Conditions: 150 mM KOAc, 10 mM MgCl2 and 150 mM bicine (pH 8.5), 24 C. Chemical mapping of a 207-nucleotide RNA with 2A3 and DMS.
[RMDB]
RNA sequence: GGGAACGACUCGAGUAGAGUCGAAAAAGAGGCGAUACGUCGCCUCAAGCUUGGUGCUUAGCUUCUUUCACCAAGCAUAUUGCACGCGGAUAACCGCCAAAGGAGAAACACUGACUACGGUCAGUGAGGAAGUUGGUUCGGUUCGCCGAACCAACAAUCCCUCUAGCUAGUUCGCUAGCUAGAGGGAAAAAGAAACAACAACAACAAC
Reactivity to 2A3 in 0.01 (KOAc 150mM, MgCl2 10mM, bicine 150mM(pH8.5), 24C), signal-to-noise 2, nucleotides 027 to 156: a000g010a000g000g000c020g020a000u020a050c210g110u010c000g040c030c000u000c000a000a000g000c000u000u000g000g020u020g010c040u020u050a090g090c010u010u010c000u050u060u030c000a000c000c000a000a000g010c000a010u070a040u020u110g060c030a010c060g000c010g030g010a080u100a300a240c010c010g000c030c010a070a020a000g050g010a010g000a030a060a000c000a000c000u010g000a000c010u020a010c130g050g010u010c010a000g000u010g000a020g010g030a060a070g000u000u000g010g000u000u000c010g000g060u010u020c060g030c020c000g000a000a000c000c000a000a000c000a000a000
Reactivity to DMS in 0.01 (KOAc 150mM, MgCl2 10mM, bicine 150mM(pH8.5), 24C), signal-to-noise 2, nucleotides 027 to 156: a060g010a070g010g030c020g020a060u000a120c240g050u010c040g020c000c000u000c030a010a090g000c010u010u000g020g010u010g000c070u010u010a020g050c150u000u000c020u000u000u000c020a080c010c000a000a010g010c010a060u000a020u010u000g000c080a120c180g010c010g000g030a160u000a150a180c030c010g030c030c060a060a110a180g030g010a110g010a210a080a110c030a090c010u010g000a030c010u030a120c300g070g020u000c000a000g030u010g010a070g010g000a090a110g020u000u000g020g000u000u000c010g030g000u000u010c300g020c030c000g010a010a010c010c010a050a010c000a060a120

2A3 adducts were read by reverse transcription with SuperScript II with manganese. Values cover nucleotides 27 to 156. The 2A3 profile rests on 1,313 reads.